[RMDB]
Record summary:
Conditions: 150 mM KOAc, 10 mM MgCl2 and 150 mM bicine (pH 8.5), 24 C. This 177-nucleotide RNA was probed chemically with DMS and 2A3.
RNA sequence: GGGAACGACUCGAGUAGAGUCGAAAAUGCGAUGAUGUGCGACGGAGUCCGUAUCGGCCCAUGAAGUUUUUCAGACGUCCAUCGCACCGCACAGUGUGGUUACUGUGCGGCCCGAACACGGGAGAGAAAUGUAACAAGGCUUCGGCCUUGUUACAUUAAAAGAAACAACAACAACAAC
Reactivity to DMS in 0.01 (KOAc 150mM, MgCl2 10mM, bicine 150mM(pH8.5), 24C), signal-to-noise 3, nucleotides 027 to 126: u000g010c000g020a000u000g000a090u000g020u000g010c070g020a130c070g000g010a110g030u020c000c020g020u000a070u020c050g030g020c030c040c060a190u000g000a050a090g000u030u010u000u000u000c030a070g000a190c040g020u000c050c040a020u010c010g010c000a100c000c020g010c010a010c010a000g000u000g010u000g030g000u020u030a030c000u000g000u000g020c000g000g000c000c010c010g030a120a110c150a050c040g000g010g020a160g020a050g000a050
Reactivity to 2A3 in 0.01 (KOAc 150mM, MgCl2 10mM, bicine 150mM(pH8.5), 24C), signal-to-noise 3, nucleotides 027 to 126: u040g010c010g000a000u020g010a010u110g050u100g070c040g020a020c030g050g010a060g050u090c000c020g020u080a130u160c090g030g000c000c000c000a020u130g050a060a040g090u030u020u020u140u170c050a050g000a040c020g010u010c020c020a000u030c000g000c010a020c030c000g000c000a000c000a000g000u030g020u080g090g200u210u130a010c000u000g000u000g000c000g000g000c020c000c000g000a010a010c110a020c050g030g050g010a080g000a000g060a130
For 2A3 the reverse transcriptase was SuperScript II with manganese.